An RNA of 177 nucleotides, treated with DMS and read out base by base.
Reactivities are given for positions 27 through 126.
DMS adducts were read by reverse transcription with MarathonRT.
The reactions ran in a buffer of 150 mM KOAc, 10 mM MgCl2 and 150 mM bicine (pH 8.5), at 24 C.
Source: RMDB library VIROID, as collected in RNAgym.
RNA sequence: GGGAACGACUCGAGUAGAGUCGAAAACACCGCAACUUGGCCAGACCUCGCCAAUCACCCCCACACCAAGCCAAAAACCGGUCCCCAACGCAGUUUAGUAUCAAGUCGUCGCAUCCACGCUCCCGAGCAACGAGGAAUAGUUCGCUAUUCCUCGUUGAAAAGAAACAACAACAACAAC
Reactivity to DMS in 0.01 (KOAc 150mM, MgCl2 10mM, bicine 150mM(pH8.5), 24C), signal-to-noise 2, nucleotides 027 to 126: c140a110c050c020g010c080a070a040c080u000u000g000g000c030c070a090g000a070c030c020u000c050g010c030c050a040a030u030c070a220c040c000c020c000c010a080c100a070c030c080a030a070g010c040c040a020a030a040a110a100c080c040g010g010u000c010c010c020c050a070a060c080g010c040a080g000u000u000u000a080g020u000a080u000c070a060a090g010u010c050g000u000c010g020c020a040u020c000c040a040c050g020c090u000c000c010c010g010a150g020